[RMDB]
RNA sequence: GGGAACGACUCGAGUAGAGUCGAAAAUCGAAGAGCUCUAGUCAGAGGAAGAGUCGAUCCUGAUCUCUCCUGAGAAGGACUGAGAGACUGAGACUCUUCAGGACUCUAGCUUCCUCUAGUCCUGAUCGAAGAGCUCUUCCUGAUCAGGACUCUUCGAAAUCUUGUCGAAAUUCGUUUCGACAAGAUUAAAAGAAACAACAACAACAAC
Reactivity to 2A3 in 0.01 (KOAc 150mM, MgCl2 10mM, bicine 150mM(pH8.5), 24C), signal-to-noise 5, nucleotides 027 to 156: u050c010g000a000a000g000a010g010c040u000c020u060a010g030u020c030a030g030a080g290g010a020a010g000a010g020u030c040g060a160u080c010c040u140g100a210u000c000u000c010u030c020c040u080g020a050g060a120a060g050g020a050c130u210g030a020g000a000g010a030c010u020g020a030g000a130c020u010c010u060u010c020a020g050g020a010c020u020c040u070a020g020c040u090u060c020c020u040c030u020a010g010u010c000c000u010g000a020u040c050g060a080a050g010a070g050c040u020c000u030u000c000c000u050g000a010u020c000a000g000g040a000c000u000c010u020u010c000g030a040
Reactivity to DMS in 0.01 (KOAc 150mM, MgCl2 10mM, bicine 150mM(pH8.5), 24C), signal-to-noise 2, nucleotides 027 to 156: u000c020g020a020a030g000a030g020c000u020c020u000a050g020u000c030a080g020a180g060g030a020a050g020a050g030u000c020g010a180u010c030c020u000g000a140u000c010u000c010u000c030c010u000g040a280g000a300a050g000g010a050c060u010g030a060g000a080g000a140c020u000g020a300g000a090c020u000c020u000u010c040a080g030g010a080c010u000c020u000a070g030c050u000u010c020c030u010c050u000a050g020u000c000c000u000g010a120u000c030g000a050a070g000a120g000c050u000c020u000u000c030c040u000g020a050u000c010a020g000g000a020c030u000c010u000u000c010g000a080
Structure probing data (2A3 and DMS) for a 207-nucleotide construct. The 2A3 profile rests on 4,463 reads. 2A3 is a SHAPE reagent: it acylates the 2'-hydroxyl of flexible nucleotides of all four kinds. For DMS, 5,010 sequencing reads were counted. 2A3 adducts were read by reverse transcription with SuperScript II with manganese. The data come from the RNA Mapping Database (RMDB), library OK3TST. The reactions ran in a buffer of 150 mM KOAc, 10 mM MgCl2 and 150 mM bicine (pH 8.5), at 24 C.